Structure probing data (2A3 and DMS) for a 207-nucleotide construct. The data come from the RNA Mapping Database (RMDB), library OK3TST. For 2A3 the reverse transcriptase was SuperScript II with manganese. Reactivities are rounded to 0.1 and cut off at 0 and 3.

[RMDB]
RNA sequence: GGGAACGACUCGAGUAGAGUCGAAAAUGUUUUUCACAGGGAGAAUUUUUCUCUGGAUGCAAAGAGCCCGUAUGGCGAUGUCUCCAGAAAUACAUGGCCACCAUCAGUGGACUGUGAAGCAUGUAUUGAUGAUAGUUGGCUUGAGGAUGACCUUGUGACCGAUGUAUUAUUUCGAUAAUACAUCGGUAAAAGAAACAACAACAACAAC
Reactivity to 2A3 in 0.01 (KOAc 150mM, MgCl2 10mM, bicine 150mM(pH8.5), 24C), signal-to-noise 4, nucleotides 027 to 156: u030g000u000u010u000u020u030c010a010c010a010g010g040g020a120g090a140a110u060u070u010u220u070c040u000c000u020g020g000a030u040g000c010a030a170a090g110a090g040c040c030c070g140u250a180u270g020g010c000g030a030u020g000u000c000u000c020c000a000g030a030a060a010u150a040c090a090u120g040g000c010c010a010c030c020a030u060c000a010g030u040g020g120a070c040u070g060u070g160a070a040g070c020a010u120g040u110a040u030u040g040a020u000g030a060u040a220g080u160u100g020g040c020u040u070g030a020g090g020a020u030g040a010c010c000u020u010g020u020g010
Reactivity to DMS in 0.01 (KOAc 150mM, MgCl2 10mM, bicine 150mM(pH8.5), 24C), signal-to-noise 2, nucleotides 027 to 156: u010g000u000u000u000u000u000c010a060c020a020g000g000g020a130g000a110a050u000u010u010u010u000c020u010c000u000g000g020a060u000g000c050a020a130a160g010a300g010c010c020c160g030u010a110u010g010g040c000g010a090u000g010u000c120u000c030c000a070g000a080a040a080u000a070c050a080u000g010g000c000c000a000c030c030a040u000c040a120g040u000g010g010a120c030u000g030u010g010a180a090g020c020a040u000g010u000a040u000u000g040a100u010g010a070u000a060g020u000u000g040g030c020u000u000g010a120g000g010a040u000g020a200c030c000u000u000g020u000g000